[RMDB]
RNA sequence: GGGAACGACUCGAGUAGAGUCGAAAAGAAAGAAAGAAGCAGGGCUGGCAGGGAGGCUGGGAGGGGCUGGCUGGGUCUGGUAGUGGGCAUCAGCUGGCCCUCAUUUCUUAAGACAGCACUUCUGUAAAAACAUCAGGUCAUUCGUGACCUGAUGUUUAAAAGAAACAACAACAACAAC
Reactivity to 2A3 in 0.01 (KOAc 150mM, MgCl2 10mM, bicine 150mM(pH8.5), 24C), signal-to-noise 2, nucleotides 027 to 126: g120a010a070a000g090a050a060a000g120a060a010g020c050a080g060g000g000c000u020g030g040c010a030g000g020g010a010g030g040c070u100g010g080g000a100g010g000g010g000c030u020g000g000c000u010g000g000g000u000c030u100g000g120u180a120g050u290g010g000g000c030a150u030c000a040g000c030u010g000g000c000c000c010u020c010a020u010u030u020c000u030u050a000a040g030a010c010a000g080c030a020c060u000u000c000u020g040u090a090a100
Reactivity to DMS in 0.01 (KOAc 150mM, MgCl2 10mM, bicine 150mM(pH8.5), 24C), signal-to-noise 2, nucleotides 027 to 126: g010a070a070a120g000a090a130a120g010a060a070g010c050a050g020g010g000c030u020g000g010c020a080g010g010g000a050g000g020c080u000g000g020g000a110g000g000g000g020c000u000g020g030c000u000g010g020g010u010c010u000g010g000u010a040g040u030g000g000g000c000a050u030c020a030g040c050u000g000g000c000c000c000u010c030a040u010u000u010c030u040u030a050a080g000a100c040a020g010c060a090c100u000u010c010u000g000u060a040a080

Chemical mapping of a 177-nucleotide RNA with 2A3 and DMS. The RNA was probed in 150 mM KOAc, 10 mM MgCl2 and 150 mM bicine (pH 8.5) at 24 C. 2A3 adducts were read by reverse transcription with SuperScript II with manganese.